Structure probing data (DMS and 2A3) for a 177-nucleotide construct. The reactions ran in a buffer of 150 mM KOAc, 10 mM MgCl2 and 150 mM bicine (pH 8.5), at 24 C. Reactivities are given for positions 27 through 126. DMS adducts were read by reverse transcription with MarathonRT. The 2A3 profile rests on 21,320 reads. For DMS, 22,430 sequencing reads were counted.
RNA sequence: GGGAACGACUCGAGUAGAGUCGAAAACUGAUCGCCAAUGCCGGCGUGGCCAGUACGCUCGCGCACGGCGGCGACUGGGAGGCGCGCGAGCGCACCGCGGCAAUCGUCGAUACGAAUUUCUACGGCAAUUUUACCACUAUUUCGAUAGUGGUAAAAUAAAAGAAACAACAACAACAAC
Reactivity to DMS in 0.01 (KOAc 150mM, MgCl2 10mM, bicine 150mM(pH8.5), 24C), signal-to-noise 9, nucleotides 027 to 126: c050u000g010a080u010c030g020c020c020a140a140u010g010c010c010g010g010c030g020u000g010g010c030c050a100g010u000a090c080g010c010u010c030g030c010g020c090a090c120g020g010c010g010g000c020g010a030c050u000g010g010g010a140g010g010c020g020c020g010c200g000a100g010c010g010c020a090c040c020g010c050g000g010c040a070a050u000c080g010u000c140g000a080u000a080c090g010a080a100u000u000u000c030u000a090c070g000g010c150a110
Reactivity to 2A3 in 0.01 (KOAc 150mM, MgCl2 10mM, bicine 150mM(pH8.5), 24C), signal-to-noise 8, nucleotides 027 to 126: c020u040g020a110u060c030g000c020c020a080a100u150g010c020c010g100g050c030g030u050g050g040c000c020a050g060u110a110c050g010c100u230c060g000c020g010c040a150c080g170g010c000g000g010c010g030a030c020u020g020g030g060a120g090g000c020g000c010g000c030g040a010g000c000g000c000a010c000c030g050c040g020g000c000a030a100u100c050g030u020c020g020a030u040a200c060g050a080a120u070u070u030c040u060a060c030g060g000c020a030